[RMDB]
Structure probing data (DMS) for a 177-nucleotide construct. The reactions ran in a buffer of 150 mM KOAc, 10 mM MgCl2 and 150 mM bicine (pH 8.5), at 24 C.
RNA sequence: GGGAACGACUCGAGUAGAGUCGAAAAGAUAUGGACAUUCAGAGGGAGAAUAUCGGAAACGAUCCCCCAUUCGAGGAUCUCUAAUGUCCUAAGUCAAAAGGAUACAUGAGUUCGCUCAUGUAUCCAAGCAUAGCAAGAUGUUCGCAUCUUGCUAUGCAAAAGAAACAACAACAACAAC
Reactivity to DMS in 0.01 (KOAc 150mM, MgCl2 10mM, bicine 150mM(pH8.5), 24C), signal-to-noise 2, nucleotides 027 to 126: g020a030u000a300u000g000g000a000c010a000u000u000c210a010g030a050g000g000g030a080g000a030a030u000a050u000c040g000g010a060a030a130c020g020a090u000c010c010c010c030c070a120u000u000c030g000a080g020g000a100u000c000u000c000u000a030a010u000g000u000c000c010u000a040a110g020u000c050a060a070a110a110g000g000a000u000a000c000a010u030g000a000g000u000u000c210g000c000u000c000a000u000g020u000a000u010c030c000a020a030
Source information: The data come from the RNA Mapping Database (RMDB), library TTRDEL.